[RMDB]
RNA sequence: GGGAACGACUCGAGUAGAGUCGAAAAAGCUGCCCUAAAUCGGCGGAAAGGACCCCGCUAUCGGGAGCGGCUAGCAGCGAGGGUUGCCGCUCCAGCCGCGCUAUGAAGCAGGCAUAGCAGAUUUACAAUAUAUUAUAGUCUUCGGACUAUAAUAUAUAAAAGAAACAACAACAACAAC
Reactivity to DMS in 0.01 (KOAc 150mM, MgCl2 10mM, bicine 150mM(pH8.5), 24C), signal-to-noise 3, nucleotides 027 to 126: a100g000c020u000g010c000c010c040u000a050a070a090u020c270g010g010c020g000g010a040a070a080g020g010a150c100c020c020c090g010c040u000a060u000c180g010g010g020a020g010c000g000g010c010u010a070g010c050a070g010c070g010a090g010g010g000u000u000g010c020c000g010c010u000c020c020a110g000c050c030g030c100g010c020u000a040u010g010a100a080g020c040a130g010g030c010a040u000a030g010c010a150g000a130u000u000u000a080c080a110
Reactivity to 2A3 in 0.01 (KOAc 150mM, MgCl2 10mM, bicine 150mM(pH8.5), 24C), signal-to-noise 1, nucleotides 027 to 126: a000g010c030u040g000c030c010c000u030a060a060a050u210c040g010g000c010g000g040a070a100a050g110g080a130c060c000c000c000g000c050u060a040u140c120g150g000g000a030g010c000g020g010c030u080a020g050c060a030g040c030g060a190g000g130g030u120u040g030c020c030g000c000u000c000c000a000g020c000c000g120c020g000c000u030a050u250g160a170a010g060c040a010g080g000c010a010u040a010g000c010a010g040a130u140u230u110a030c010a030
Chemical mapping of a 177-nucleotide RNA with DMS and 2A3. For 2A3, 1,216 sequencing reads were counted. DMS adducts were read by reverse transcription with MarathonRT. Source: RMDB library OK2TRN, as collected in RNAgym.